Overview:
This 177-nucleotide RNA was probed chemically with DMS. The DMS profile rests on 790 reads. The RNA was probed in 150 mM KOAc, 10 mM MgCl2 and 150 mM bicine (pH 8.5) at 24 C. DMS adducts were read by reverse transcription with MarathonRT.
[RMDB]
RNA sequence: GGGAACGACUCGAGUAGAGUCGAAAACACUCCCAAAGUGCAUGGGUGGUAUGAGCCACUGUGCCGGGCCAGUGAGUUGUAAUUAAACUGUGCAACAGCAGCCGUGACAAGCCAAGACCCAGUGGUGCCUUAAUCCCCGGUUCGCCGGGGAUUAAGGAAAAGAAACAACAACAACAAC
Reactivity to DMS in 0.01 (KOAc 150mM, MgCl2 10mM, bicine 150mM(pH8.5), 24C), signal-to-noise 1, nucleotides 027 to 126: c300a200c200u020c010c010c000a060a100a130g000u020g000c030a040u020g020g020g020u000g020g010u010a080u010g030a080g000c010c010a040c010u030g010u020g040c000c000g000g000g010c070c040a030g010u000g000a070g020u010u000g000u000a120a070u000u000a090a060a020c090u030g030u000g000c000a040a080c060a120g050c040a040g010c020c030g000u000g030a100c100a040a080g020c050c060a030a120g000a140c030c010c040a100g000u000g000g000u020g000